[RMDB]
The data come from the RNA Mapping Database (RMDB), library OK1LIB.
Structure probing data (2A3 and DMS) for a 177-nucleotide construct.
The DMS profile rests on 1,922 reads.
RNA sequence: GGGAACGACUCGAGUAGAGUCGAAAACCGCGGGAAUGCCGCAGCAAUGAAGCUUAUGUGCCCGGGGGCACCAAUCCCUGGUAUGGGGACCCCAACCAGAUGCUCAGCUGUCCCGCGCCGGCCGCGCCUUACUAGGGCCCUUCGGGGCCCUAGUAAGAAAAGAAACAACAACAACAAC
Reactivity to 2A3 in 0.01 (KOAc 150mM, MgCl2 10mM, bicine 150mM(pH8.5), 24C), signal-to-noise 3, nucleotides 027 to 126: c010c010g000c020g020g000g020a120a170u150g070c020c030g000c030a000g000c010a020a190u170g040a200a010g030c030u250u140a080u150g090u120g000c030c040c040g000g010g050g000g010c120a060c110c040a020a050u050c000c020c000u040g120g020u270a180u200g010g000g010g030a040c010c010c010c040a010a030c020c020a010g020a090u100g010c000u030c080a030g010c020u060g060u070c000c020c000g000c000g010c010c020g020g020c000c010g030c010g030c020
Reactivity to DMS in 0.01 (KOAc 150mM, MgCl2 10mM, bicine 150mM(pH8.5), 24C), signal-to-noise 2, nucleotides 027 to 126: c130c030g000c020g000g000g070a140a060u000g030c070c080g000c030a090g000c040a060a110u010g000a060a040g000c030u030u010a020u040g010u000g000c060c080c110g000g050g000g000g000c080a090c070c090a070a160u010c050c030c020u020g030g030u030a070u070g000g000g000g000a050c050c010c000c030a110a100c040c060a020g000a080u020g000c000u020c070a130g000c040u010g000u000c010c020c060g000c040g020c020c100g070g020c010c040g000c020g000c230
Conditions: 150 mM KOAc, 10 mM MgCl2 and 150 mM bicine (pH 8.5), 24 C. 2A3 adducts were read by reverse transcription with SuperScript II with manganese.